[RMDB]
This 177-nucleotide RNA was probed chemically with 2A3 and DMS. The DMS profile rests on 1,333 reads. 2A3 adducts were read by reverse transcription with SuperScript II with manganese. Reactivities are rounded to 0.1 and cut off at 0 and 3. Conditions: 150 mM KOAc, 10 mM MgCl2 and 150 mM bicine (pH 8.5), 24 C. The data come from the RNA Mapping Database (RMDB), library OK2TST. The 2A3 profile rests on 765 reads.
RNA sequence: GGGAACGACUCGAGUAGAGUCGAAAAGUAAGAUCAGAUGACUCUCCGGAGAUGGUGUUGACACAGUUGCAUCAAGCCAGUGAUAAUUUCUUCAAGGAAUUAAUCCAUGUCAAUCAUUUGAUUGGCCGCGUGCAUUAGGAUUCGUCCUAAUGCACGCAAAAGAAACAACAACAACAAC
Reactivity to 2A3 in 0.01 (KOAc 150mM, MgCl2 10mM, bicine 150mM(pH8.5), 24C), signal-to-noise 1, nucleotides 027 to 126: g090u060a140a040g000a140u040c030a000g040a090u040g020a030c010u010c020u040c010c080g100g040a030g000a000u020g030g060u120g080u080u120g080a050c070a010c030a130g150u250u110g040c010a000u010c010a050a030g030c010c000a030g000u030g140a000u040a050a030u010u050u030c020u150u120c050a060a170g060g000a020a000u030u000a140a050u000c060c040a000u060g010u000c000a020a020u010c000a030u100u190u260g000a000u030u030g000g070c040c080
Reactivity to DMS in 0.01 (KOAc 150mM, MgCl2 10mM, bicine 150mM(pH8.5), 24C), signal-to-noise 2, nucleotides 027 to 126: g020u020a050a190g000a050u000c050a010g030a080u000g010a090c130u000c020u000c060c110g000g020a110g030a100u010g010g010u020g000u010u000g010a060c090a100c170a140g020u000u000g000c070a090u010c060a020a100g000c020c030a120g000u000g010a060u000a010a020u000u000u000c010u000u010c250a090a120g010g000a020a020u000u010a020a100u010c050c040a120u010g030u000c040a000a030u010c000a210u000u000u020g010a040u000u000g020g020c010c300